[RMDB]
Source: RMDB library M2RFPK, as collected in RNAgym. This 207-nucleotide RNA was probed chemically with DMS and 2A3. DMS adducts were read by reverse transcription with MarathonRT. The DMS profile rests on 1,971 reads. As a SHAPE reagent, 2A3 marks flexible, mostly unpaired nucleotides at the ribose 2'-OH.

RNA sequence: GGGAACGACUCGAGUAGAGUCGAAAAGGGUGAGACCUAGGAACCGUAGGGGUAUUCUCAAAGGAAGCUUUUGCAGUGACGCCCAUGUAAGUGGGAUAUAACAAGAGAACUCGUAUGAGUAGCCUAAUAAAUCGGACCUUCUUCGGAAGGUCCGAAACCUUACAACUGUGUUCGCACAGUUGUAAGGAAAAGAAACAACAACAACAAC
Reactivity to DMS in 0.01 (KOAc 150mM, MgCl2 10mM, bicine 150mM(pH8.5), 24C), signal-to-noise 1, nucleotides 027 to 156: g010g030g000u000g000a120g000a100c020c020u000a120g000g000a030a130c030c010g030u000a080g010g000g010g010u000a070u030u020c060u010c010a050a060a160g010g000a090a090g000c030u000u000u000u000g030c000a100g030u000g000a100c100g000c000c000c000a020u000g030u000a030a210g090u000g000g010g030a130u010a100u010a120a060c060a020a150g000a100g000a080a100c010u000c040g020u000a060u000g000a030g060u000a080g010c030c000u000a030a130u000a060a040a120u000c000g010g010a030c000c000u000u010c010u000u010c300g040g010a080a010g010g010u000c000c020g010a000a010a060
Reactivity to 2A3 in 0.01 (KOAc 150mM, MgCl2 10mM, bicine 150mM(pH8.5), 24C), signal-to-noise 2, nucleotides 027 to 156: g050g000g020u050g040a100g020a040c010c010u060a050g000g050a010a030c030c040g050u060a040g030g030g010g000u040a100u120u000c060u010c000a040a040a000g040g000a100a000g050c040u000u040u070u120g000c050a050g000u040g050a020c050g000c000c010c020a000u070g050u120a190a080g010u010g020g000g000a010u030a010u030a080a000c050a040a010g030a000g020a060a010c020u020c060g080u150a030u110g000a020g000u040a030g030c000c000u060a110a060u090a110a110a080u050c000g000g000a000c000c000u000u010c000u000u000c020g060g000a030a000g000g000u000c000c000g000a000a000a000
The reactions ran in a buffer of 150 mM KOAc, 10 mM MgCl2 and 150 mM bicine (pH 8.5), at 24 C.